[RMDB]
RNA sequence: GGGAACGACUCGAGUAGAGUCGAAAAAGUUCUAGUCCUCACCUAAGAUCAGACUAACAAGGCCCUCAAAGAAAGAGCACUAGGUUGGGCUUUGUGGUGGGGAUAAGUGUCUCAUUUUUAGUCCCAAAUUAAAAACGAGAUUUUGGGCUGUACAUCACGACUAUAUGAGUUUCGACUCAUAUAGUCGAAAAGAAACAACAACAACAAC
Reactivity to DMS in 0.01 (KOAc 150mM, MgCl2 10mM, bicine 150mM(pH8.5), 24C), signal-to-noise 1, nucleotides 027 to 156: a130g000u000u000c050u000a190g000u000c000c000u000c010a050c010c020u010a090a060g020a140u010c060a020g010a170c060u010a060a160c050a090a060g000g000c010c000c000u000c040a070a160a170g000a170a080a080g000a070g000c070a120c090u000a060g020g020u000u000g030g020g010c020u000u000u000g050u000g050g060u010g020g000g020g010a000u000a000a100g020u000g000u000c000u010c020a150u000u000u000u000u000a010g020u000c040c050c100a050a050a070u020u000a010a020a030a050a010c030g000a030g000a090u000u000u000u020g000g030g030c110u000g030u000a070c120a130u000c070a300
Reactivity to 2A3 in 0.01 (KOAc 150mM, MgCl2 10mM, bicine 150mM(pH8.5), 24C), signal-to-noise 2, nucleotides 027 to 156: a000g050u060u070c020u030a030g010u000c000c000u000c000a000c000c010u080a100a040g070a180u180c100a020g170a240c050u110a030a000c030a010a000g000g000c000c000c010u060c050a180a170a030g080a070a090a000g050a030g020c020a010c020u040a020g000g110u060u060g010g000g000c030u000u000u000g040u050g010g000u000g000g000g000g000a000u040a010a000g020u000g040u040c000u000c040a070u020u130u080u090u220a030g080u170c020c010c030a060a010a000u090u080a090a040a030a040a040c120g050a070g020a100u010u030u020u080g000g000g030c020u040g090u130a060c030a150u110c080a030